[RMDB]
RNA sequence: GGGAACGACUCGAGUAGAGUCGAAAAAUGGUAGUUAGUCUACUCGCUAUCAUAGUUACUUUGGAGUAAUCUAAAGUGUGUGUAAACGGGCGAAAGUCUGUAAAAUACUGGGGACAUAGGGUCAACAAGAACUAGUAGACCUUCGGGUCUACUAGAACAUAUAUGCUAAGUUCGCUUAGCAUAUAUGAAAAGAAACAACAACAACAAC
Reactivity to DMS in 0.01 (KOAc 150mM, MgCl2 10mM, bicine 150mM(pH8.5), 24C), signal-to-noise 4, nucleotides 027 to 156: a060u020g020g020u000a060g020u010u010a100g010u000c050u010a070c030u000c030g010c010u010a110u000c010a010u000a110g020u000u010a040c020u000u000u010g020g020a050g010u010a120a140u000c020u000a030a010a030g030u000g020u000g040u000g000u000a080a120a040c050g020g010g000c040g010a140a110a160g010u000c020u000g010u000a040a060a060a110u000a050c060u000g000g010g010g010a040c060a090u000a080g020g000g010u000c050a050a090c050a080a100g000a090a240c020u000a020g010u000a020g000a020c000c010u000u000c300g040g030g030u000c000u000a010c000u000a010g000a040a100
Reactivity to 2A3 in 0.01 (KOAc 150mM, MgCl2 10mM, bicine 150mM(pH8.5), 24C), signal-to-noise 5, nucleotides 027 to 156: a000u020g000g010u010a000g010u070u010a030g040u020c040u110a110c010u120c020g000c010u020a010u030c010a020u020a100g080u120u080a050c010u030u020u010g020g010a010g030u130a120a100u000c020u040a020a020a030g010u020g010u010g000u000g030u070a040a130a060c030g010g000g010c030g040a060a030a030g010u010c010u020g060u080a020a060a060a010u140a080c060u050g010g000g000g020a000c010a050u120a050g070g020g020u030c030a020a030c010a090a060g050a080a020c010u000a000g000u000a000g000a000c000c000u030u050c140g060g000g000u000c010u010a000c000u000a000g000a010a000

This 207-nucleotide RNA was probed chemically with DMS and 2A3. Values cover nucleotides 27 to 156. Source: RMDB library M2RFPK, as collected in RNAgym. For 2A3 the reverse transcriptase was SuperScript II with manganese. DMS (dimethyl sulfate) methylates the pairing face of unpaired adenines and cytosines.